[RMDB]
RNA sequence: GGGAACGACUCGAGUAGAGUCGAAAAGGGAGGUAGGCGGGACGACCACCUAGGACUGCAAGCAAAUCUCUUGGGUGGCAGGAGCCCCUGUGUGCUGUAGCAGAACUACAACCUCUCCCGCCGUUAGGCCGACUAUCGAUUUCGAUCGAUAGUCGGCAAAAGAAACAACAACAACAAC
Reactivity to 2A3 in 0.01 (KOAc 150mM, MgCl2 10mM, bicine 150mM(pH8.5), 24C), signal-to-noise 2, nucleotides 027 to 126: g080g020g010a060g040g050u210a060g020g000c000g010g000g000a010c070g060a040c000c000a000c020c000u000a010g020g010a040c040u050g000c070a090a070g030c000a040a130a160u100c040u010c000u120u050g000g030g030u120g010g010c060a050g060g180a100g020c000c030c000c000u040g040u020g010u050g100c050u030g020u080a040g000c030a010g000a080a010c010u020a010c010a130a140c010c010u000c010u000c010c010c010g000c020c010g000u060u100a070g070
Reactivity to DMS in 0.01 (KOAc 150mM, MgCl2 10mM, bicine 150mM(pH8.5), 24C), signal-to-noise 3, nucleotides 027 to 126: g020g000g020a100g010g030u010a100g010g010c040g000g010g000a050c250g020a090c020c030a050c060c060u000a040g000g000a200c080u010g010c120a090a070g000c150a020a100a140u000c100u010c040u010u010g000g000g020u000g000g010c030a050g000g020a120g000c040c010c010c020u000g000u000g010u000g010c070u000g000u000a040g020c030a140g010a040a300c020u000a010c050a060a150c080c030u000c010u010c010c000c000g040c020c000g010u000u000a060g010
Conditions: 150 mM KOAc, 10 mM MgCl2 and 150 mM bicine (pH 8.5), 24 C.
Chemical mapping of a 177-nucleotide RNA with 2A3 and DMS.
2A3 adducts were read by reverse transcription with SuperScript II with manganese.
Values cover nucleotides 27 to 126.
Source: RMDB library OK2TRN, as collected in RNAgym.